[RMDB]
RNA sequence: GGGAACGACUCGAGUAGAGUCGAAAAUCGUGAGCACGUGACGACAUGCGUACGAGUACUAUACUAGAUCAUGCUAGGAUCUCUAGCACGUACUCAUGGUAUACAUGCACAUGGAUCUAUGAUCAUCGCCAGCAAGACGAUUCGUCGUCUUGCUGGCAAAAGAAACAACAACAACAAC
Reactivity to 2A3 in 0.01 (KOAc 150mM, MgCl2 10mM, bicine 150mM(pH8.5), 24C), signal-to-noise 3, nucleotides 027 to 126: u090c030g030u020g000a000g000c000a000c020g040u050g100a090c040g020a010c000a000u020g030c000g040u020a010c020g000a010g040u030a120c130u170a080u040a150c090u030a030g120a230u110c050a060u090g040c020u020a060g040g140a300u070c130u000c000u100a010g000c000a000c000g000u010a000c010u000c010a000u020g000g000u060a040u040a060c030a000u020g000c030a020c010a020u030g120g010a010u000c050u110a190u220g080a060u110c040a040u120c120
Reactivity to DMS in 0.01 (KOAc 150mM, MgCl2 10mM, bicine 150mM(pH8.5), 24C), signal-to-noise 2, nucleotides 027 to 126: u000c000g060u000g000a160g020c010a030c040g000u010g000a090c110g050a150c010a020u000g010c080g010u000a000c040g000a090g010u000a060c140u010a100u000a050c050u010a110g000a100u030c130a060u010g000c060u000a050g000g010a130u000c190u000c030u000a020g000c030a060c060g030u000a010c000u000c000a070u000g020g040u000a060u000a010c030a070u000g010c030a120c080a020u000g010g020a040u000c060u020a160u010g040a080u010c080a120u000c090